[RMDB]
Source: RMDB library OK2TRN, as collected in RNAgym. An RNA of 177 nucleotides, treated with DMS and read out base by base. The reactions ran in a buffer of 150 mM KOAc, 10 mM MgCl2 and 150 mM bicine (pH 8.5), at 24 C. For DMS, 804 sequencing reads were counted.
RNA sequence: GGGAACGACUCGAGUAGAGUCGAAAAUAAAUUCAAACUGUUUGUAGUCUCAGUUAUUGUUAAGUGAGAACAAUUAUACAAUAGCCUAUCUCAAAGGUUUGUUCUUUCUAUAGGAUUGGUCCCCCUCCCACACGAAUACGUUCGCGUAUUCGUGUGGAAAAGAAACAACAACAACAAC
Reactivity to DMS in 0.01 (KOAc 150mM, MgCl2 10mM, bicine 150mM(pH8.5), 24C), signal-to-noise 1, nucleotides 027 to 126: u000a030a090a130u010u010c010a020a020a100c100u010g010u010u010u010g010u020a040g010u000c090u000c150a150g010u000u000a050u000u000g010u000u000a020a140g000u000g010a100g010a130a050c070a070a090u000u000a100u010a070c030a030a020u040a020g010c000c080u000a160u000c020u000c050a010a010a090g020g000u000u010u000g020u020u000c070u000u000u010c070u000a140u020a080g030g000a080u000u020g010g000u000c000c020c000c020c030u000c070